[RMDB]
An RNA of 177 nucleotides, treated with 2A3 and DMS and read out base by base. Source: RMDB library RFMREP, as collected in RNAgym. The RNA was probed in 150 mM KOAc, 10 mM MgCl2 and 150 mM bicine (pH 8.5) at 24 C. The 2A3 profile rests on 1,184 reads.
RNA sequence: GGGAACGACUCGAGUAGAGUCGAAAAGUAUAUGCUUGUCAGUGCAUGCACGUGUAUGUCUGGGAGUACAAAUGGGUGCGACUGGUUGUAGGGAACUAGCUAUGUGCCUUCUAUUAGGCCAUGACAGCCUGCAUUGUUAGUUCGCUAACAAUGCAGGAAAAGAAACAACAACAACAAC
Reactivity to 2A3 in 0.01 (KOAc 150mM, MgCl2 10mM, bicine 150mM(pH8.5), 24C), signal-to-noise 2, nucleotides 027 to 126: g030u020a090u040a020u300g010c090u140u110g110u250c080a040g040u000g060c020a030u040g000c030a010c130g060u090g010u040a030u050g060u000c040u030g080g050g010a080g040u080a020c060a050a080a100u100g040g020g000u040g050c060g040a020c040u020g020g140u100u100g030u080a060g000g050g000a020a010c010u030a040g020c020u000a000u040g040u150g010c000c000u040u100c070u040a180u110u040a010g020g000c040c010a000u040g020a000c000a030g020
Reactivity to DMS in 0.01 (KOAc 150mM, MgCl2 10mM, bicine 150mM(pH8.5), 24C), signal-to-noise 2, nucleotides 027 to 126: g020u010a090u000a090u010g000c030u000u010g020u000c080a030g000u010g020c060a020u000g010c020a120c190g000u020g000u000a050u000g010u000c010u000g000g020g010a170g000u000a050c060a030a060a060u020g010g020g020u000g010c060g020a070c090u010g010g000u010u000g010u010a050g000g000g010a030a070c080u000a060g000c030u000a020u000g010u010g030c010c010u000u000c300u000a170u000u000a010g020g000c010c040a010u000g010a060c060a090g000